The record gives the reactivity of an RNA of 207 nucleotides to 2A3 and DMS. DMS adducts were read by reverse transcription with MarathonRT. The DMS profile rests on 2,647 reads. The RNA was probed in 150 mM KOAc, 10 mM MgCl2 and 150 mM bicine (pH 8.5) at 24 C. For 2A3, 1,142 sequencing reads were counted.
RNA sequence: GGGAACGACUCGAGUAGAGUCGAAAAUAACCGAAAAGUUAAGAUCAGCAAAAGUUUAGUAUCAGAGGGCAAUUCGGCGUUUUCCUUGCCAGCCAUGCAUAGUAAGUGGCUCGAGAUGAAGUAUUGAGUGUGAAAAAGAAAGCCUUGCAGUGUGUGAGCUCAGGUAUAGUUUCGACUAUACCUGAGCAAAAGAAACAACAACAACAAC
Reactivity to 2A3 in 0.01 (KOAc 150mM, MgCl2 10mM, bicine 150mM(pH8.5), 24C), signal-to-noise 2, nucleotides 027 to 156: u070a010a000c010c000g040a060a210a030a000g040u050u080a080a010g030a120u060c060a020g060c060a090a070a070a040g040u140u090u190a110g010u210a020u140c030a020g010a100g040g030g030c030a070a060u090u050c010g000g010c000g000u050u000u020u130c000c000u010u050g000c010c010a020g000c010c010a000u070g000c000a010u090a090g070u130a100a100g050u000g010g000c000u030c030g090a080g000a090u070g010a050a090g010u080a100u110u150g010a060g000u060g000u020g070a090a070a000a040a000g060a110a030a000g030c000c000u060u080g070c030a070g030u040g000u030g010u070g130a000
Reactivity to DMS in 0.01 (KOAc 150mM, MgCl2 10mM, bicine 150mM(pH8.5), 24C), signal-to-noise 2, nucleotides 027 to 156: u020a070a130c020c000g000a040a050a080a170g040u000u000a070a110g000a090u000c050a100g010c060a060a110a120a100g000u000u000u000a100g030u010a130u000c050a090g030a080g010g010g010c040a050a160u000u000c030g020g020c070g040u000u000u030u000c030c060u000u000g010c000c030a110g050c030c010a040u000g010c060a120u000a140g000u000a110a160g100u000g000g000c050u050c070g000a130g020a130u000g000a020a120g010u000a070u030u000g000a070g000u000g020u010g000a040a060a060a150a070g010a030a040a140g030c060c050u000u000g000c010a080g010u000g020u010g000u000g010a130